[RMDB]
The record gives the reactivity of an RNA of 177 nucleotides to 2A3 and DMS. For 2A3 the reverse transcriptase was SuperScript II with manganese. It was measured as part of the RMDB library OK2TRN. DMS adducts were read by reverse transcription with MarathonRT. The 2A3 profile rests on 29,991 reads. For DMS, 35,849 sequencing reads were counted.
RNA sequence: GGGAACGACUCGAGUAGAGUCGAAAAUCUGUUGACACGUAAUCGUAUAGUCGAAGUCGGACUACGGUUACCGCAACAGAAGUUAGACUGCGUCAAGUCCGACUUGGACUAUUCUGGGAUCUAACCACUUCUCCAGAGUAUUCGUACUUUGGAGAAGAAAAGAAACAACAACAACAAC
Reactivity to 2A3 in 0.01 (KOAc 150mM, MgCl2 10mM, bicine 150mM(pH8.5), 24C), signal-to-noise 8, nucleotides 027 to 126: u010c010u020g040u030u060g060a040c020a010c110g050u080a040a050u080c020g000u010a020u020a030g010u000c070g140a050a010g030u030c010g000g000a000c010u030a040c040g040g000u050u040a050c020c010g000c000a030a050c020a050g110a070a000g010u010u100a050g010a070c050u040g030c050g050u070c070a050a000g000u000c000c000g000a020c000u010u040g090g000a000c000u010a010u040u000c050u050g020g010g010a020u000c010u030a040a030c010c010a020
Reactivity to DMS in 0.01 (KOAc 150mM, MgCl2 10mM, bicine 150mM(pH8.5), 24C), signal-to-noise 9, nucleotides 027 to 126: u000c030u000g010u000u000g010a120c130a070c160g010u000a070a070u010c050g010u000a040u000a020g010u000c000g010a050a050g010u000c070g010g010a020c010u000a070c090g010g000u000u000a060c130c090g000c060a040a050c050a060g010a070a090g010u000u010a090g010a110c070u000g000c100g000u000c120a090a040g000u000c020c010g000a040c040u000u000g000g000a030c000u000a020u000u000c040u010g000g000g000a090u000c060u000a080a050c070c100a180